Source: RMDB library OK1LIB, as collected in RNAgym. The record gives the reactivity of an RNA of 177 nucleotides to 2A3. As a SHAPE reagent, 2A3 marks flexible, mostly unpaired nucleotides at the ribose 2'-OH. Reactivities are given for positions 27 through 126. The RNA was probed in 150 mM KOAc, 10 mM MgCl2 and 150 mM bicine (pH 8.5) at 24 C.

RNA sequence: GGGAACGACUCGAGUAGAGUCGAAAAGAGGAGAAGCAACGGACUUCCUCCUAUCAAGAUUGUCAUUGCACAAAGACUUCAUUUAAAGGAUUUGCAUGGAAUCAUAAAGGAGACAGAGCCGACAAUACCAGCCCAGGUCAUUCGUGACCUGGGCUGGAAAAGAAACAACAACAACAAC
Reactivity to 2A3 in 0.01 (KOAc 150mM, MgCl2 10mM, bicine 150mM(pH8.5), 24C), signal-to-noise 1, nucleotides 027 to 126: g120a050g060g300a160g090a220a000g120c090a030a020c110g050g140a120c000u000u000c000c000u000c000c000u170a210u040c210a000a050g000a000u010u150g090u280c030a040u000u280g040c010a040c080a110a030a030g000a040c190u000u030c040a300u090u300u260a110a000a000g010g000a000u000u000u010g110c010a030u000g000g000a080a000u000c000a000u120a090a110a000g030g000a000g000a000c010a090g050a000g000c000c000g000a000c120a000a030u090a080